[RMDB]
RNA sequence: GGGAACGACUCGAGUAGAGUCGAAAAUGUUGCGCACCGACCGGCUCGACGUCGAGGUGGGUUAUGUGCCGCGCCGGCGCAGCCCCGCGACCCGGGCCUACCGCUUGCCGGCCGGGCGCCGGGCGGCCAUGGGAUGGCUGUUCGCAGCCAUCCCAUGAAAAGAAACAACAACAACAAC
Reactivity to DMS in 0.01 (KOAc 150mM, MgCl2 10mM, bicine 150mM(pH8.5), 24C), signal-to-noise 2, nucleotides 027 to 126: u020g000u060u000g010c070g040c000a140c020c030g000a040c130c060g000g010c010u000c040g000a120c270g010u000c010g030a060g000g020u010g000g030g040u000u070a080u010g020u030g020c040c040g050c130g000c080c090g000g010c010g010c020a090g000c070c010c000c020g000c090g010a070c060c110c010g000g000g000c050c040u020a060c080c000g020c050u000u010g000c080c000g010g000c080c000g000g000g000c000g010c000c000g000g000g020c010g020g020c070
The record gives the reactivity of an RNA of 177 nucleotides to DMS. The reactions ran in a buffer of 150 mM KOAc, 10 mM MgCl2 and 150 mM bicine (pH 8.5), at 24 C.